[RMDB]
RNA sequence: GGGAACGACUCGAGUAGAGUCGAAAAAAAAGAUAUGGAGCUACCUGAAUCGUACGGGAGCUUGGAUUUAAGGAUCGGAAACGAUCCUUUGUCAGCUCCGGUACGUGAGUAGCUCCUAAGUCAAAAACAACAUUAACUCGUUCGCGAGUUAAUGUUGAAAAGAAACAACAACAACAAC
Reactivity to DMS in 0.01 (KOAc 150mM, MgCl2 10mM, bicine 150mM(pH8.5), 24C), signal-to-noise 2, nucleotides 027 to 126: a060a040a100a070g010a030u010a300u000g000g000a010g000c000u000a010c010c070u030g010a130a080u010c000g020u000a000c000g000g010g010a010g000c000u010u020g030g000a040u010u010u000a000a010g000g010a010u000c000g020g000a130a100a190c020g000a000u000c010c000u010u010u000g000u000c000a040g000c000u000c000c010g000g020u000a000c020g010u000g000a100g020u000a010g010c010u010c010c000u000a010a070g000u000c020a070a130a080a100a180
Reactivity to 2A3 in 0.01 (KOAc 150mM, MgCl2 10mM, bicine 150mM(pH8.5), 24C), signal-to-noise 2, nucleotides 027 to 126: a020a010a010a060g030a030u060a040u120g000g000a000g010c000u000a020c010c050u080g120a160a130u160c010g000u010a010c090g110g010g000a000g040c040u100u150g130g000a040u300u300u270a010a010g020g010a000u000c000g010g000a070a060a030c020g010a000u000c000c010u000u020u020g000u000c000a000g000c020u000c000c000g080g000u010a000c000g000u040g000a040g010u000a000g000c010u000c010c000u000a000a000g020u000c020a040a000a080a020a130
The record gives the reactivity of an RNA of 177 nucleotides to DMS and 2A3. The reactions ran in a buffer of 150 mM KOAc, 10 mM MgCl2 and 150 mM bicine (pH 8.5), at 24 C. DMS adducts were read by reverse transcription with MarathonRT. It was measured as part of the RMDB library TTRDES.